[RMDB]
RNA sequence: GGGAACGACUCGAGUAGAGUCGAAAAGGCGUCUUCGCUGCCUCGGCCGCCAUGCACUGACCGGUAGCCGCCGUAAUAGCGGCAUUGUUCCCAUAAAUGGAUGUGGGUGUGGGUGUCGAAGUAGCAGAUUUAAUCGCAUCUUCGGAUGCGAUUAAAUAAAAGAAACAACAACAACAAC
Reactivity to DMS in 0.01 (KOAc 150mM, MgCl2 10mM, bicine 150mM(pH8.5), 24C), signal-to-noise 3, nucleotides 027 to 126: g010g000c100g010u000c030u000u000c110g010c020u000g010c020c030u000c010g020g010c010c090g010c020c020a020u000g020c030a060c010u000g010a100c050c030g000g040u000a150g020c000c000g030c020c030g020u000a110a090u000a080g020c000g010g020c010a100u000u010g010u000u000c010c010c000a090u020a050a100a120u010g000g010a200u000g010u000g000g000g010u010g030u000g000g000g030u000g020u000c030g000a040a020g040u000a050g040c020a100g010
Reactivity to 2A3 in 0.01 (KOAc 150mM, MgCl2 10mM, bicine 150mM(pH8.5), 24C), signal-to-noise 1, nucleotides 027 to 126: g100g070c070g060u050c070u100u060c140g040c000u020g000c000c060u020c000g020g000c000c020g060c030c010a090u030g000c030a020c010u070g150a100c010c010g030g000u020a030g000c000c000g000c010c010g040u050a000a040u140a100g000c010g010g000c010a030u030u220g010u000u000c000c030c030a020u160a010a140a040u130g040g040a030u120g040u110g120g060g000u070g000u040g020g000g030u020g000u000c010g010a030a020g000u020a000g030c040a010g020